[RMDB]
RNA sequence: GGGAACGACUCGAGUAGAGUCGAAAACUCCAGAGCCAUAAUUAGAGCAAACUAAUUGAAGUUGUGUUUUGACACACUUUCCAAAUUCACGGGUGCCGGAUGACAUAUUCACAACACUGCUGCCGCAUAGAUUUUUCUGGUUCGCCAGAAAAAUCUAAAAAGAAACAACAACAACAAC
Reactivity to 2A3 in 0.01 (KOAc 150mM, MgCl2 10mM, bicine 150mM(pH8.5), 24C), signal-to-noise 3, nucleotides 027 to 126: c010u000c020c000a030g020a000g070c020c000a060u050a060a050u120u020a020g000a010g100c070a090a070a040c040u060a010a050u010u120g040a100a000g000u110u090g010u030g030u020u110u030u210g160a020c000a000c000a010c040u000u040u000c010c000a010a080a160u110u060c030a030c070g060g010g000u030g000c000c000g000g030a030u050g040a030c000a050u100a060u070u080c000a020c010a050a050c010a010c050u040g020c000u040g000c010c000g000c010a030
Reactivity to DMS in 0.01 (KOAc 150mM, MgCl2 10mM, bicine 150mM(pH8.5), 24C), signal-to-noise 2, nucleotides 027 to 126: c020u070c000c000a130g000a060g000c100c040a140u000a050a040u010u000a050g000a070g050c160a070a180a140c060u010a030a010u000u010g000a060a070g000u000u010g100u000g020u000u010u070u000g010a050c050a010c080a000c010u000u000u000c100c030a070a100a100u000u030c220a030c030g000g010g070u010g010c040c020g020g000a120u030g010a010c220a010u040a030u040u000c070a060c040a050a160c060a100c010u000g000c020u010g000c050c010g010c180a070